Chemical mapping of a 177-nucleotide RNA with 2A3 and DMS. For DMS, 1,307 sequencing reads were counted. Source: RMDB library OK2TRN, as collected in RNAgym. The RNA was probed in 150 mM KOAc, 10 mM MgCl2 and 150 mM bicine (pH 8.5) at 24 C. 2A3 adducts were read by reverse transcription with SuperScript II with manganese.
RNA sequence: GGGAACGACUCGAGUAGAGUCGAAAAAGGUACGGAUCGGCGCACAGCGCCUGGCCAUCUAGGCCUCUCUGCGCGCGCUACGUACGCGCGAUCGAUCUAGUGGCCGCUCUAUCUGGCCUAUGAUCGACGGCCAAUUAAUGUUCGCAUUAAUUGGCCGAAAAGAAACAACAACAACAAC
Reactivity to 2A3 in 0.01 (KOAc 150mM, MgCl2 10mM, bicine 150mM(pH8.5), 24C), signal-to-noise 1, nucleotides 027 to 126: a000g100g000u040a010c010g000g040a170u040c060g070g010c010g050c040a050c050a210g030c010g020c050c000u000g020g030c030c010a080u190c130u130a090g010g030c000c030u000c000u000c010u040g010c050g000c000g040c000g050c010u010a020c100g000u020a000c000g020c000g000c040g140a130u030c020g000a020u010c020u000a060g210u150g060g020c010c020g030c030u010c020u080a200u110c110u110g000g010c000c000u020a040u050g020a000u020c020g000a000
Reactivity to DMS in 0.01 (KOAc 150mM, MgCl2 10mM, bicine 150mM(pH8.5), 24C), signal-to-noise 2, nucleotides 027 to 126: a000g020g000u010a000c050g030g000a070u000c200g040g010c030g000c020a120c100a100g000c300g020c130c060u000g020g040c050c080a170u000c120u010a120g020g000c010c010u010c050u010c040u000g000c010g010c000g090c010g010c010u000a050c060g010u020a000c000g040c130g010c060g000a080u000c000g010a050u000c010u000a130g000u000g000g020c010c010g010c220u000c280u000a120u000c060u020g010g000c000c010u000a150u000g000a000u000c010g000a020